Record summary
An RNA of 207 nucleotides, treated with DMS and 2A3 and read out base by base. For DMS, 5,650 sequencing reads were counted. For 2A3 the reverse transcriptase was SuperScript II with manganese. The 2A3 profile rests on 1,438 reads. As a SHAPE reagent, 2A3 marks flexible, mostly unpaired nucleotides at the ribose 2'-OH.

RNA sequence: GGGAACGACUCGAGUAGAGUCGAAAAAACGACGAACGACCAGGUGAAGUUACGCCGUAAGUUGAGACCAAAAGUUAGAUUUAGCGUGCCGUAGGUAUCAAUUAUAGACGUGUUGGCCGCGUAGAGUUUGAAGUCGUCUUUGCGACGAUGCAAUCCACCGAUUUAUAGCAUUCGUGCUAUAAAUCGGAAAAGAAACAACAACAACAAC
Reactivity to DMS in 0.01 (KOAc 150mM, MgCl2 10mM, bicine 150mM(pH8.5), 24C), signal-to-noise 2, nucleotides 027 to 156: a080a020c020g010a050c020g040a160a090c030g010a130c040c030a100g040g030u000g020a110a130g030u000u000a010c020g020c020c020g020u000a060a060g000u000u000g020a090g000a040c020c020a030a090a120a060g010u000u000a140g020a210u000u000u000a090g000c080g020u010g010c000c020g040u000a120g000g010u000a020u040c020a010a070u010u000a140u000a070g020a050c030g010u000g010u000u000g010g000c030c010g020c050g010u000a070g000a100g010u000u000u000g010a070a140g030u000c000g020u000c000u010u000u000g010c040g000a030c010g010a020u000g000c080a040a070u010c020c010a180
Reactivity to 2A3 in 0.01 (KOAc 150mM, MgCl2 10mM, bicine 150mM(pH8.5), 24C), signal-to-noise 3, nucleotides 027 to 156: a000a000c070g070a050c070g010a060a020c010g030a020c040c040a040g070g020u110g070a080a060g070u070u060a060c050g020c030c020g040u060a040a030g050u030u020g040a090g010a030c040c000a000a140a000a000g080u100u060a070g040a240u150u050u130a070g070c080g070u150g000c010c030g040u040a060g000g040u030a020u060c020a030a010u160u090a090u090a150g080a050c020g020u060g060u080u060g000g000c030c050g000c020g000u030a010g010a030g060u070u060u130g070a050a010g010u000c000g020u020c050u090u220u190g050c010g010a030c010g000a010u050g050c020a000a060u040c030c020a030